Structure probing data (2A3 and DMS) for a 177-nucleotide construct. For 2A3 the reverse transcriptase was SuperScript II with manganese. For DMS, 3,206 sequencing reads were counted. Reactivities are given for positions 27 through 126. Conditions: 150 mM KOAc, 10 mM MgCl2 and 150 mM bicine (pH 8.5), 24 C.
[RMDB]
RNA sequence: GGGAACGACUCGAGUAGAGUCGAAAACGUCGUGGACGGCUCGAUACCGGGCCGGCUGUCUCCGGCUUGUCUCUUUCCGGUCGCCGAGCCCUUGCCGCCGCGAAACCGUUUGCCGACGUCUUCGAAGAUAUGCUAUGGUGUUCGCACCAUAGCAUAUAAAAGAAACAACAACAACAAC
Reactivity to 2A3 in 0.01 (KOAc 150mM, MgCl2 10mM, bicine 150mM(pH8.5), 24C), signal-to-noise 3, nucleotides 027 to 126: c030g030u010c010g010u020g020g040a250c020g000g000c070u110c110g130a100u130a230c040c120g010g020g000c000c010g000g000c000u120g130u120c080u000c040c000g000g000c050u140u120g150u200c090u030c000u190u150u020c000c000g000g000u020c000g000c000c010g050a100g000c000c040c000u010u090g020c010c010g010c000c000g000c000g000a050a010a010c030c010g010u020u010u030g070c090c000g050a110c100g070u050c080u130u050c040g040a090a050g020
Reactivity to DMS in 0.01 (KOAc 150mM, MgCl2 10mM, bicine 150mM(pH8.5), 24C), signal-to-noise 2, nucleotides 027 to 126: c110g010u000c030g000u000g010g000a070c000g010g000c000u000c270g010a090u030a140c230c190g030g000g020c010c000g000g000c030u000g000u030c080u030c010c040g010g020c300u030u010g020u040c070u030c040u010u000u000c000c030g000g010u000c080g030c010c010g000a140g030c000c000c000u000u040g020c000c010g000c020c030g010c000g000a040a120a110c110c050g000u000u000u000g010c040c000g030a060c090g010u000c120u010u000c010g000a180a100g000